[RMDB]
RNA sequence: GGGAACGACUCGAGUAGAGUCGAAAAACACGAACUCUCACGUACGAGUGUGAGAGUGUGAGAGAGAACACGUGUUCGUGUUCUCGAACGAACGUACGUGAACGUGAUCUCGAGUGUUCGAUCUCACGAGAGAGUGUGAUCUCGUUCGUGAACGUACAACUUAGUGCGUUUUCGAACGCACUAAGUUAAAAGAAACAACAACAACAAC
Reactivity to DMS in 0.01 (KOAc 150mM, MgCl2 10mM, bicine 150mM(pH8.5), 24C), signal-to-noise 3, nucleotides 027 to 156: a100c030a110c040g020a080a050c020u010c000u000c000a020c020g010u000a300c140g020a240g030u020g010u000g020a030g020a050g000u000g010u010g000a100g020a300g030a140g020a030a040c000a020c000g010u000g010u010u000c020g070u010g010u000u000c000u000c000g010a090a110c040g000a100a140c040g030u000a040c060g040u000g010a100a060c030g030u000g010a060u010c030u000c030g000a180g020u000g000u000u000c030g000a160u000c030u030c010a060c020g000a150g000a060g000a130g020u010g030u010g010a100u000c020u000c010g020u010u000c030g010u000g000a050a050c060g020u000a070c030
Reactivity to 2A3 in 0.01 (KOAc 150mM, MgCl2 10mM, bicine 150mM(pH8.5), 24C), signal-to-noise 6, nucleotides 027 to 156: a000c050a000c020g030a090a020c000u010c000u000c010a010c000g090u220a070c120g080a140g120u210g000u030g030a010g000a030g010u030g000u080g020a100g000a000g000a000g060a020a010c010a000c010g050u100g140u280u140c030g010u010g000u000u010c050u010c000g000a040a000c030g050a060a020c060g020u070a000c020g000u010g030a050a010c010g020u050g050a050u020c020u020c050g050a050g020u070g050u080u080c020g030a080u010c010u000c040a030c060g030a050g000a000g000a010g070u110g000u070g070a040u030c010u010c010g020u030u010c010g010u030g060a070a010c020g030u070a010c010